[RMDB]
The record gives the reactivity of an RNA of 207 nucleotides to 2A3. The reactions ran in a buffer of 150 mM KOAc, 10 mM MgCl2 and 150 mM bicine (pH 8.5), at 24 C. Source: RMDB library OK3TST, as collected in RNAgym. The 2A3 profile rests on 1,587 reads.

RNA sequence: GGGAACGACUCGAGUAGAGUCGAAAACGCUCGAACAGCGCCAUCCAACGCUGCGCCUGGCUGAGGCCGGCGACCGCCUGAGGGUCUUCGCCCAGAUCGAUCAGAGCGUCCGCGACCGACGCAUACUUCGGGACGAUCCACGGGGCGGUGUAGGUGCGUUUCCUACCUGUUUCGACAGGUAGGAAACAAAAGAAACAACAACAACAAC
Reactivity to 2A3 in 0.01 (KOAc 150mM, MgCl2 10mM, bicine 150mM(pH8.5), 24C), signal-to-noise 3, nucleotides 027 to 156: c030g030c020u040c070g090a080a030c030a020g000c010g010c040c020a090u080c000c000a080a010c010g000c000u010g000c030g020c020c050u090g030g120c060u130g080a080g010g080c010c000g000g000c000g010a010c000c000g010c000c020u040g020a150g000g010g030u000c040u050u060c100g010c000c010c000a100g000a170u140c080g030a080u130c040a060g040a030g090c010g020u010c020c030g200c050g080a110c100c060g000a000c000g000c010a060u090a170c040u070u070c010g030g000g030a010c000g020a010u000c010c010a070c230g020g000g000g040c010g000g010u000g020u020a040g000g020u020g020c010